[RMDB]
RNA sequence: GGGAACGACUCGAGUAGAGUCGAAAAAAACAGAAGACCUUCAACUUAGGGAAGAACUUGGGGAGGCAGAUGGUGAGCUGGCCUCCAGCAGGCACUUAACAAAGAUGUACUUGUGAUUCCAGAAACAGAGCUUUAUAGUUUGGUUGAGGCUGGUAAGCCUCCAACUACUAUUCGUAGUAGUUGGAGGAAAAGAAACAACAACAACAAC
Reactivity to DMS in 0.01 (KOAc 150mM, MgCl2 10mM, bicine 150mM(pH8.5), 24C), signal-to-noise 2, nucleotides 027 to 156: a030a010a100c060a120g050a090a090g020a050c020c000u000u000c070a060a110c050u000u000a050g030g000g010a100a050g000a040a070c050u000u000g040g020g000g000a060g000g000c010a110g000a100u010g020g000u010g020a050g030c040u000g030g000c020c020u000c030c040a130g040c040a050g010g030c010a030c010u000u000a110a150c070a080a070a090g020a120u000g020u000a030c000u020u000g030u000g000a140u000u030c010c020a200g020a080a050a060c040a100g000a070g000c050u000u000u000a070u000a090g010u000u000u000g000g000u030u000g000a040g000g000c020u000g000g000u000a090a180g000
Reactivity to 2A3 in 0.01 (KOAc 150mM, MgCl2 10mM, bicine 150mM(pH8.5), 24C), signal-to-noise 3, nucleotides 027 to 156: a000a000a010c060a060g060a100a010g030a070c050c000u110u070c080a150a180c060u120u140a060g040g020g030a050a050g030a100a060c080u140u120g090g000g000g000a000g000g000c010a010g010a070u090g010g110u030g020a050g020c010u030g030g060c000c010u030c020c000a000g040c000a000g050g000c040a020c060u070u130a120a040c090a090a090a030g060a110u110g030u110a070c020u060u090g020u030g070a030u090u060c040c030a040g080a020a030a000c060a020g070a020g080c010u050u160u100a100u040a060g050u020u090u110g010g020u020u020g010a010g020g000c020u030g050g010u050a070a050g010